[RMDB]
RNA sequence: GGGAACGACUCGAGUAGAGUCGAAAAGGAAGGGAUUCUGGGAGGUUGUAGCAGUGGAAAAAGUUCUUUUCUUCCUCUGAUCGCCCUCUCAGCUCUUUCCUUCUAAAGCCUAUGGUUCGCCAUAGGCGGUUGUUAAUGUCUUCGGACAUUAACAACCAAAAGAAACAACAACAACAAC
Reactivity to 2A3 in 0.01 (KOAc 150mM, MgCl2 10mM, bicine 150mM(pH8.5), 24C), signal-to-noise 2, nucleotides 027 to 126: g010g000a000a000g030g000g000a050u300u040c000u000g010g010g000a010g010g020u050u060g030u090a070g050c010a010g000u020g000g080a000a010a000a010a000g100u300u300c080u080u170u040u020c030u030u000c010c000u010c010u020g020a070u230c020g010c000c000c000u000c000u000c020a000g000c010u030c000u010u010u010c000c000u000u000c000u010a060a000a000g000c000c000u000a000u000g000g060u020u060c210g010c080c000a010u000a000g000g000c020
Reactivity to DMS in 0.01 (KOAc 150mM, MgCl2 10mM, bicine 150mM(pH8.5), 24C), signal-to-noise 2, nucleotides 027 to 126: g000g010a010a000g000g000g000a020u030u000c000u000g010g010g010a020g020g000u000u000g010u020a060g000c020a020g020u000g000g000a010a010a030a030a040g020u010u010c220u010u010u000u000c090u000u000c010c000u000c010u000g010a040u010c040g000c240c000c000u000c000u000c000a000g000c130u000c010u000u000u010c000c010u010u000c020u000a080a080a210g020c000c010u000a000u010g000g010u000u010c190g040c000c000a010u000a010g010g010c010

This 177-nucleotide RNA was probed chemically with 2A3 and DMS.
Source: RMDB library RFMREP, as collected in RNAgym.
The 2A3 profile rests on 3,419 reads.